Chemical mapping of a 177-nucleotide RNA with 2A3 and DMS.
RNA sequence: GGGAACGACUCGAGUAGAGUCGAAAAAAGGGCGUCGCGCCUACCGUCACCUCGCGCAGCGGCACGCUCUCGGCGCCCGAGCGCACGGCGCGCGCGAGCCGCGCCAGCAUCACGAACAUGUACGAGACAUUCCCUGAAGUUUCGACUUCAGGGAAUGAAAAGAAACAACAACAACAAC
Reactivity to 2A3 in 0.01 (KOAc 150mM, MgCl2 10mM, bicine 150mM(pH8.5), 24C), signal-to-noise 2, nucleotides 027 to 126: a000a000g040g000g020c020g000u060c040g050c020g030c060c030u020a030c010c030g040u030c010a050c050c020u060c050g000c020g020c080a070g000c020g100g020c060a020c080g010c000u020c030u040c040g030g000c010g010c000c030c000g000a030g000c070g020c030a060c100g050g000c010g000c010g000c010g020c060g030a010g020c070c020g020c010g000c000c000a020g020c020a020u100c040a010c100g060a110a040c060a110u160g020u150a060c040g020a030g030a040
Reactivity to DMS in 0.01 (KOAc 150mM, MgCl2 10mM, bicine 150mM(pH8.5), 24C), signal-to-noise 5, nucleotides 027 to 126: a060a070g000g000g000c000g030u010c050g030c250g000c090c050u000a060c070c020g000u020c090a100c180c010u000c060g020c050g020c040a120g010c040g010g020c050a110c160g000c030u010c090u000c060g020g010c040g010c030c020c030g000a060g000c070g020c070a100c160g000g020c030g010c030g000c030g030c090g010a080g010c140c040g000c040g000c030c020a080g010c040a070u000c040a070c080g000a080a060c180a070u000g000u000a090c050g010a110g000a300
Conditions: 150 mM KOAc, 10 mM MgCl2 and 150 mM bicine (pH 8.5), 24 C. For 2A3, 4,128 sequencing reads were counted.